[RMDB]
RNA sequence: GGGAACGACUCGAGUAGAGUCGAAAACGCAACUUGGGCAGAAGUACUGCUCCAGUUGUCACUGGACCUCCCCAGAGUAAACUGCCUUUUGAUGACCAGGGCGAAUUGAGUGAAAUCGUCAUGGACAUUUCAUCGAAACUUUCGAGUUUCGAUGAAAAAAAGAAACAACAACAACAAC
Reactivity to DMS in 0.01 (KOAc 150mM, MgCl2 10mM, bicine 150mM(pH8.5), 24C), signal-to-noise 4, nucleotides 027 to 126: c220g020c000a010a000c020u010u000g020g010g010c000a000g000a230a160g000u060a160c000u010g000c020u000c000c020a000g000u000u000g000u010c100a100c130u010g000g010a120c080c060u010c010c010c000c030a090g000a120g000u010a040a060a080c090u000g000c080c030u000u000u010u000g000a070u000g010a070c010c010a030g000g010g010c010g010a040a020u010u010g010a180g010u030g010a080a080a050u000c030g000u000c000a030u000g000g000a070c050a090
Reactivity to 2A3 in 0.01 (KOAc 150mM, MgCl2 10mM, bicine 150mM(pH8.5), 24C), signal-to-noise 7, nucleotides 027 to 126: c080g000c000a000a010c000u010u010g000g010g000c020a000g020a260a060g160u180a150c000u000g000c000u000c000c000a000g000u000u000g040u060c020a030c090u080g030g030a030c010c010u040c000c000c000c000a010g040a030g040u140a040a080a030c050u060g030c020c010u060u090u080u160g090a070u050g020a030c000c000a000g000g020g000c020g020a060a120u080u100g100a140g150u170g070a060a040a060u020c010g000u000c000a010u010g010g000a020c010a040